[RMDB]
RNA sequence: GGGAACGACUCGAGUAGAGUCGAAAAGGCUUCGCGGUUAAUUUGCGGGCCACUGUAGCUUAUUUGGACAGAACCCCAAUCUGGUUGGUGAGUUAUCAGACAGUUAGAUUUUAGCAAGUGGCUGACCCGGUUUGACAUAAUUCGUUAUGUCAAACCGAAAAGAAACAACAACAACAAC
Reactivity to DMS in 0.01 (KOAc 150mM, MgCl2 10mM, bicine 150mM(pH8.5), 24C), signal-to-noise 3, nucleotides 027 to 126: g000g010c030u010u010c020g030c020g020g020u000u010a110a160u000u000u010g010c020g000g000g000c010c030a030c040u020g020u000a080g000c040u010u000a090u000u000u000g010g010a070c080a080g020a100a140c040c010c020c050a060a130u010c050u010g010g000u010u000g010g020u000g010a080g010u000u000a040u010c040a030g010a110c090a050g010u000u000a060g000a090u010u000u000u000a070g030c020a090a040g020u000g000g010c010u000g000a130c070c040
Reactivity to 2A3 in 0.01 (KOAc 150mM, MgCl2 10mM, bicine 150mM(pH8.5), 24C), signal-to-noise 2, nucleotides 027 to 126: g050g000c050u280u230c110g010c050g030g100u070u150a140a180u160u100u100g040c000g010g000g030c000c020a000c000u070g030u070a010g070c020u070u170a080u200u300u150g050g020a030c000a040g060a190a160c000c000c000c000a000a060u050c060u070g020g000u070u030g000g010u030g050a150g050u040u100a090u130c030a000g130a200c010a000g050u010u080a030g000a110u110u120u000u030a000g020c020a050a030g000u020g030g040c040u020g030a040c010c000